[RMDB]
RNA sequence: GGGAACGACUCGAGUAGAGUCGAAAACAGAAGGAAUUUCUGGAAUGCGAAGAGUCGCGCUCCGACAUAUAUUUAUUGUAUGCCCAGAUGAAGAAUACACAUACCUUUAAGGGCUUUCUUCUACCUGCGAGGAGGAUCGGUUCGCCGAUCCUCCUCGAAAAGAAACAACAACAACAAC
Reactivity to 2A3 in 0.01 (KOAc 150mM, MgCl2 10mM, bicine 150mM(pH8.5), 24C), signal-to-noise 2, nucleotides 027 to 126: c100a010g000a000a030g110g000a100a190u040u010u000c160u130g040g000a070a000u040g010c000g060a020a040g150a070g300u030c000g040c000g000c000u000c010c000g030a000c030a010u080a000u010a010u090u300u040a170u040u130g050u000a010u050g000c020c070c000a030g000a020u180g030a000a010g030a000a030u210a150c020a010c000a150u300a180c000c000u010u210u000a120a100g050g000g030c000u000u000u000c000u000u000c000u000a080c000c020u050g130